RNA sequence: GGGAACGACUCGAGUAGAGUCGAAAAGAUGAGUCGCCUCGCAUGUGAAUGUGAGGUACAUGACGUUCUGACUACGUUAUGUAUGGUGUAUGGCAACAUACACCACGACUCAUGGUAGUCAGAAUAAGGUAGUGCAAGAUUUCGAUCUUGCGCUACCAAAAGAAACAACAACAACAAC
Reactivity to DMS in 0.01 (KOAc 150mM, MgCl2 10mM, bicine 150mM(pH8.5), 24C), signal-to-noise 4, nucleotides 027 to 126: g000a010u000g000a010g010u000c000g010c000c000u000c010g000c000a000u000g000u060g020a160a010u000g010u000g000a010g000g010u000a000c000a000u000g000a010c000g010u000u030c000u000g000a020c010u000a040c000g010u010u000a000u010g000u000a010u000g000g010u000g000u000a000u000g000g000c300a100a160c000a000u000a000c000a000c010c000a000c000g000a010c000u000c000a000u010g010g020u010a000g020u000c000a000g010a300a110u030a090a120
Reactivity to 2A3 in 0.01 (KOAc 150mM, MgCl2 10mM, bicine 150mM(pH8.5), 24C), signal-to-noise 9, nucleotides 027 to 126: g060a000u000g000a000g000u000c000g000c000c000u000c000g010c010a010u040g100u120g280a290a020u000g010u010g000a010g000g000u000a000c000a000u010g000a000c010g020u130u090c020u000g000a000c000u000a000c000g010u010u010a000u000g000u000a000u000g000g000u000g000u000a000u000g020g000c030a050a020c000a110u000a000c000a000c000c000a000c000g000a000c000u000c000a000u000g010g000u000a000g000u000c000a000g060a010a060u200a080a020
Structure probing data (DMS and 2A3) for a 177-nucleotide construct. The 2A3 profile rests on 39,716 reads. Values cover nucleotides 27 to 126.